[RMDB]
The record gives the reactivity of an RNA of 177 nucleotides to 2A3 and DMS. DMS adducts were read by reverse transcription with MarathonRT. For 2A3, 1,993 sequencing reads were counted. The RNA was probed in 150 mM KOAc, 10 mM MgCl2 and 150 mM bicine (pH 8.5) at 24 C.
RNA sequence: GGGAACGACUCGAGUAGAGUCGAAAAUGAGACAGGUUGGUUGCUAUCUAAUGGAUGUGUUAGUAGUCUGAGGGGAAGGUGGCUCCAGUACGAGAGGAACGAGUUGUCGGCGCCUCUGGUCGACCGGCUAUUCUACGAGGUUCGCCUCGUAGAAUAGAAAAGAAACAACAACAACAAC
Reactivity to 2A3 in 0.01 (KOAc 150mM, MgCl2 10mM, bicine 150mM(pH8.5), 24C), signal-to-noise 2, nucleotides 027 to 126: u160g010a030g040a030c080a020g020g030u030u010g030g040u060u090g010c030u020a120u160c020u040a080a130u120g110g060a070u080g110u030g000u120u050a030g020u010a000g030u040c070u040g040a050g040g000g000g000a000a060g030g000u010g010g000c000u030c000c030a030g020u040a020c040g000a010g000a010g100g000a040a010c020g000a000g020u000u100g090u060c000g000g020c040g130c020c010u000c000u040g020g000u050c000g010a050c010c000g010g000
Reactivity to DMS in 0.01 (KOAc 150mM, MgCl2 10mM, bicine 150mM(pH8.5), 24C), signal-to-noise 4, nucleotides 027 to 126: u010g010a110g020a070c090a050g000g010u000u000g010g010u000u010g000c040u010a070u010c060u010a060a070u010g010g010a090u010g020u000g010u010u000a030g020u000a060g000u000c060u000g010a110g010g000g010g020a050a070g000g010u000g000g000c040u000c020c030a050g010u000a050c060g010a140g000a110g010g000a070a110c170g010a060g010u010u000g000u000c010g010g020c100g000c030c020u000c040u010g000g010u000c020g000a090c050c020g010g000